Structure probing data (DMS and 2A3) for a 177-nucleotide construct. DMS adducts were read by reverse transcription with MarathonRT.
[RMDB]
RNA sequence: GGGAACGACUCGAGUAGAGUCGAAAAUCACCUGCUCUGCUCGCUCAUUCAUGGCUUUCCUGUGCUCUGCCAUUGCUCAGGUGAGUGAGCAGUUCGCCCGGCACAUUGACCAGCAGAUCCAGGGCAGGUAGCAGCUUAUCUUCGGAUAAGCUGCUACAAAAGAAACAACAACAACAAC
Reactivity to DMS in 0.01 (KOAc 150mM, MgCl2 10mM, bicine 150mM(pH8.5), 24C), signal-to-noise 1, nucleotides 027 to 126: u000c170a140c030c010u000g000c010u000c000u000g010c050u000c040g020c070u000c030a020u050u000c030a110u010g010g000c050u000u000u010c140c030u000g010u010g010c050u010c100u010g000c020c030a000u000u000g030c300u000c080a160g000g020u000g000a010g040u000g030a000g000c000a010g000u000u000c010g010c020c020c020g010g010c120a110c190a100u030u020g010a140c040c030a130g020c040a060g010a040u000c090c050a060g030g000g030c030a050g010
Reactivity to 2A3 in 0.01 (KOAc 150mM, MgCl2 10mM, bicine 150mM(pH8.5), 24C), signal-to-noise 1, nucleotides 027 to 126: u060c010a040c020c020u010g030c010u030c000u000g000c020u030c030g030c030u020c000a020u140u060c010a070u140g030g050c050u060u050u060c000c070u090g080u110g070c010u020c020u100g030c040c000a050u060u150g000c020u100c070a010g000g100u020g030a020g010u000g000a000g000c000a000g000u010u020c010g020c010c030c040g000g040c030a050c030a120u090u210g060a070c050c040a000g150c000a050g040a050u030c040c040a060g000g010g000c010a000g070